[RMDB]
RNA sequence: GGGAACGACUCGAGUAGAGUCGAAAAACGACCUCCUGGUGAGUACGCUCACCAGGAGGUCGACUGCAAUGUUCUCAGUGCAUCCUUUGGUUCUCCGAGCCGAAAGAAGUCACUAGCUGAAAAAGAGUUUAUACUCUGAUCACACAGUAACAUUGCAAUAAAAGCUUAGCUCGAGAUGCGUGUGCCGUUCUGCUUUUAAUGCGAUCUGGUUCCUUUUCUCCUCGGGACAAUUAGCUGCAUCCGACGAUACGUCGUCGGAUGCAGCAAACGGUACGUUCGCGUACCGUAAAAGAAACAACAACAACAAC
Reactivity to DMS in 0.01 (KOAc 150mM, MgCl2 10mM, bicine 150mM(pH8.5), 24C), signal-to-noise 2, nucleotides 027 to 266: a220c050g030a030c000c000u000c000c000u000g010g030u010g000a020g060u000a050c210g030c010u010c000a000c000c000a030g000g010a030g020g000u010c010g010a010c130u020g000c020a010a000u000g000u000u000c070u010c200a020g050u000g000c090a270u010c040c060u000u020u000g010g010u000u000c020u020c220c210g020a050g010c030c010g020a010a010a070g010a060a110g010u030c020a020c030u030a120g070c160u000g020a050a030a040a120a000g010a010g000u000u010u000a110u060a150c000u010c010u000g000a300u000c020a000c090a170c170a040g010u010a000a010c000a010u000u000g000c000a040a060u000a040a110a110a150g000c030u010u000a280g010c000u000c000g000a010g010a100u020g010c050g000u000g000u000g000c000c000g020u010u000c030u030g020c010u020u010u010u010a120a070u010g000c020g000a070u020c080u000g060g000u000u010c080c020u010u010u010u010c060u010c010c040u000c060g010g020g020a100c170a080a070u010u020a090g020c020u020g080c010a030u000c000c080g040a070c000g050a030u000a140c140g030u000c000g050u000c030g020g000a010u000g010c130a000g000c020a010a040
Reactivity to 2A3 in 0.01 (KOAc 150mM, MgCl2 10mM, bicine 150mM(pH8.5), 24C), signal-to-noise 2, nucleotides 027 to 266: a030c000g000a000c000c000u040c010c000u050g080g000u000g080a030g000u070a070c300g000c080u010c000a000c000c020a000g000g000a000g060g030u000c010g000a000c000u030g000c000a000a000u040g020u040u000c110u060c070a020g000u010g000c020a050u120c050c020u030u000u020g050g020u080u020c250u090c140c220g030a010g010c000c010g110a010a050a030g060a080a010g020u090c010a010c010u050a080g030c150u050g050a010a010a000a130a000g020a010g040u170u230u060a210u030a020c010u010c000u000g010a020u030c010a020c000a010c000a120g010u080a000a000c000a000u000u000g010c000a000a000u120a000a110a000a000g030c040u070u060a030g030c010u000c000g040a030g040a080u140g190c030g010u110g050u050g050c020c000g010u000u010c070u120g070c030u040u100u080u300a170a140u270g030c030g030a050u000c060u090g030g000u000u090c000c000u110u120u060u040c060u030c000c040u040c070g010g000g040a050c050a180a170u300u300a200g030c220u110g000c050a130u050c040c000g040a000c010g000a050u060a050c210g060u040c000g000u000c010g000g120a000u000g000c000a010g000c000a040a030